[RMDB]
Annotation: This 207-nucleotide RNA was probed chemically with 2A3. Source: RMDB library M2RFPK, as collected in RNAgym. The reactions ran in a buffer of 150 mM KOAc, 10 mM MgCl2 and 150 mM bicine (pH 8.5), at 24 C. 2A3 adducts were read by reverse transcription with SuperScript II with manganese. The 2A3 profile rests on 487 reads.
RNA sequence: GGGAACGACUCGAGUAGAGUCGAAAACAUUGUUCUGAUCAUCUGAAGAUCAGCUAUUAGAAGAGAAAGAUCAGUUAAGUCCUUUGGACCUGAUCAGCUUGAUACAAGGACUACUGAUUUCAACUUCAAAACGGGUGCUACUUCGGUAGCACCCGAAGUAUCCUAUGCGCUUCGGCGCAUAGGAUACAAAAGAAACAACAACAACAAC
Reactivity to 2A3 in 0.01 (KOAc 150mM, MgCl2 10mM, bicine 150mM(pH8.5), 24C), signal-to-noise 1, nucleotides 027 to 156: c050a080u100u280g150u270u020c000u000g000a000u010c020a020u060c140u190g080a110a000g000a000u000c000a000g000c000u040a100u300u190a110g010a010a000g000a000g010a060a010a000g000a020u000c020a010g060u020u130a160a000g080u000c000c010u040u100u130g050g030a070c000c000u070g090a120u120c040a010g140c000u090u150g020a000u020a110c030a020a000g050g000a000c000u040a000c000u080g020a020u010u010u000c010a080a050c010u000u000c010a000a090a000a190c050g000g010g000u000g010c000u000a030c020u040u070c160g130g010u000a000g000c020a000c030c000c000g000a000a000